[RMDB]
RNA sequence: GGGAACGACUCGAGUAGAGUCGAAAAGAUAUGGAUAGUGUCCUAGCGAGACCCUGUGUCGGAAACGACACAGCGGUCGAUGAGCUAGGAGCACUAUCCUAAGUCAAAAGCCAACUUCGGUUGGCAACAAUCAGUGUAACUUCGGUUACACUGAUUGAAAAGAAACAACAACAACAAC
Reactivity to DMS in 0.01 (KOAc 150mM, MgCl2 10mM, bicine 150mM(pH8.5), 24C), signal-to-noise 7, nucleotides 027 to 126: g000a050u000a300u010g000g000a010u000a000g020u000g010u000c000c000u000a010g020c000g010a170g000a020c000c000c010u020g010u000g010u000c000g000g010a120a110a170c010g010a010c000a000c000a010g020c200g030g010u000c010g000a090u010g010a260g010c010u000a000g000g000a040g010c010a000c010u000a010u000c000c000u000a020a090g000u010c040a100a120a130a140g010c000c000a000a010c000u000u020c220g020g010u000u000g010g010c000a050a070
Reactivity to 2A3 in 0.01 (KOAc 150mM, MgCl2 10mM, bicine 150mM(pH8.5), 24C), signal-to-noise 3, nucleotides 027 to 126: g030a020u080a040u160g010g000a000u000a010g000u010g020u030c010c000u000a000g010c010g030a130g000a070c010c010c000u000g000u000g010u010c010g030g010a090a080a060c000g000a000c000a000c010a000g010c040g000g000u000c000g000a080u070g030a030g000c010u000a000g000g020a020g010c010a000c000u000a000u000c000c000u000a040a000g030u000c030a060a000a130a090g000c000c000a000a010c000u060u080c250g150g000u020u010g010g000c000a000a010